[RMDB]
Structure probing data (2A3) for a 177-nucleotide construct.
Conditions: 150 mM KOAc, 10 mM MgCl2 and 150 mM bicine (pH 8.5), 24 C.
Reactivities are rounded to 0.1 and cut off at 0 and 3.
The data come from the RNA Mapping Database (RMDB), library OK1LIB.
For 2A3 the reverse transcriptase was SuperScript II with manganese.
RNA sequence: GGGAACGACUCGAGUAGAGUCGAAAACAAGAAACGGCACCUCGUCGGUGGUGCCGAACCGACGUGACCUACCAACAGGAAACGAGCAGUCUGGUAAGACUGCAAACCUAUGGUAAAAAGACUACAAACCGAGUCAUCGAUUCGUCGAUGACUCGGUAAAAGAAACAACAACAACAAC
Reactivity to 2A3 in 0.01 (KOAc 150mM, MgCl2 10mM, bicine 150mM(pH8.5), 24C), signal-to-noise 1, nucleotides 027 to 126: c110a000a010g110a020a300a000c000g010g050c000a010c000c000u070c070g080u110c180g110g000u030g000g000u000g000c050c000g000a000a000c040c000g100a070c060g080u000g070a000c000c000u000a000c000c010a130a000c160a040g000g000a100a130a130c140g000a060g000c000a000g000u030c000u210g020g010u170a030a000g000a000c000u000g000c000a000a000a000c000c000u000a000u060g000g000u020a050a050a050a050a050g020a000c000u100a140c100a150a030